[RMDB]
RNA sequence: GGGAACGACUCGAGUAGAGUCGAAAACAUUCUUGAAAAAGUCAUGUAGAUUUAUAGCCCAUAACUUUUUUGAAUUACAUCGACGAUACGGCGUCGAAAGAAAAAUAAAUAGACCGUAUGAAAGAAAAAAACAACAGUAGCUUCGGCUACUGUUGAACAGUACAACAAGGUUCGCCUUGUUGUACUGAAAAGAAACAACAACAACAAC
Reactivity to 2A3 in 0.01 (KOAc 150mM, MgCl2 10mM, bicine 150mM(pH8.5), 24C), signal-to-noise 1, nucleotides 027 to 156: c030a030u080u030c030u080u100g010a050a000a000a000a020g000u020c040a030u040g030u130a050g040a260u070u280u090a180u300a100g010c000c020c000a020u060a090a050c040u040u050u000u050u120u140g080a080a070u150u070a140c030a050u030c010g000a000c010g000a010u010a010c000g000g000c000g010u010c000g000a010a100a010g030a010a020a000a070a010u060a000a020a050u010a030g080a060c000c000g000u010a010u000g090a020a070a030g090a000a120a050a020a000a000a020c000a000a000c000a000g010u000a000g010c010u050u020c170g080g010c020u000a000c010u010g000u000u000g000a000a000